[RMDB]
RNA sequence: GGGAACGACUCGAGUAGAGUCGAAAACCGCUACUCUUCGGAGUAGCGGAUACAUCUCGGGUCCGGGCCUAACCGUAGGACCAACGGUAAGGCCAGAGAUGAAGGGAGAGAUUUUCGAAUCUCUCAAAUACAACAAGAGGUUCGCCUCUUGUUGUAUAAAAGAAACAACAACAACAAC
Reactivity to DMS in 0.01 (KOAc 150mM, MgCl2 10mM, bicine 150mM(pH8.5), 24C), signal-to-noise 3, nucleotides 027 to 126: c000c000g000c000u000a000c000u000c000u000u010c150g010g000a020g010u010a000g020c000g000g000a030u010a060c040a030u000c000u000c010g000g010g000u000c040c050g010g010g010c000c000u010a070a020c010c010g000u000a060g000g000a100c160c130a040a020c000g000g000u000a080a040g010g000c010c000a050g000a020g010a020u000g000a190a140g010g010g000a010g000a020g010a020u000u000u010u010c180g000a010a010u000c000u000c000u000c010a020a080
Reactivity to 2A3 in 0.01 (KOAc 150mM, MgCl2 10mM, bicine 150mM(pH8.5), 24C), signal-to-noise 2, nucleotides 027 to 126: c000c000g040c000u000a000c000u020c020u050u100c270g130g000a000g000u000a000g000c000g000g010a000u010a010c010a010u020c010u010c000g080g000g090u020c010c030g040g020g000c010c010u010a050a040c000c010g020u040a060g070g290a080c030c020a010a000c000g000g000u010a030a000g000g000c000c010a020g000a010g000a000u050g050a060a080g180g140g000a000g000a010g000a000u030u010u030u070c140g100a070a020u000c010u000c010u000c010a000a000